An RNA of 207 nucleotides, treated with 2A3 and DMS and read out base by base. The data come from the RNA Mapping Database (RMDB), library M2RFPK. For 2A3 the reverse transcriptase was SuperScript II with manganese. For 2A3, 1,460 sequencing reads were counted.
RNA sequence: GGGAACGACUCGAGUAGAGUCGAAAAAACGCGAAAGUCGGACGGCGGCCAUGAGUCGCAACGCAAAGCCACGGCAAGUGGAGUUAGCGAGAAGAGACUAGGCUUUGGUUUCUUCAAGUGAAGCGGUAAAAGGUUCGAGACUUCGGUCUCGAACCAACAUCCAUAGGGACUUCGGUCCCUAUGGAUGAAAAGAAACAACAACAACAAC
Reactivity to 2A3 in 0.01 (KOAc 150mM, MgCl2 10mM, bicine 150mM(pH8.5), 24C), signal-to-noise 2, nucleotides 027 to 156: a000a000c110g040c020g060a240a060a050g140u160c080g050g030a090c100g060g020c000g010g030c000c020a230u220g020a070g060u020c000g000c010a030a000c010g000c040a110a060a020g020c000c010a020c020g110g060c210a170a060g000u030g000g020a050g040u130u100a020g000c010g000a030g020a020a010g020a010g000a000c030u000a020g100g100c030u140u190u130g020g000u020u010u010c000u000u000c000a020a040g040u030g070a050a020g020c010g020g000u060a040a060a030a120g000g000u010u010c010g000a000g000a000c000u070u120c240g060g010u000c000u000c000g000a000a000c000c000a000a000
Reactivity to DMS in 0.01 (KOAc 150mM, MgCl2 10mM, bicine 150mM(pH8.5), 24C), signal-to-noise 2, nucleotides 027 to 156: a050a070c020g020c030g000a150a100a140g010u000c010g000g020a100c080g020g030c010g070g020c030c020a090u000g000a220g060u020c000g000c000a030a090c040g060c040a080a060a120g000c020c000a040c040g020g000c060a100a150g040u040g000g010a110g030u000u000a250g000c010g000a300g000a020a050g000a020g010a030c010u000a080g070g000c150u000u010u020g020g000u010u010u000c010u030u010c020a030a300g030u000g000a070a110g030c040g000g010u010a040a030a110a170g030g010u000u010c000g010a030g010a050c000u000u000c300g020g010u000c000u000c010g000a010a010c020c000a010a020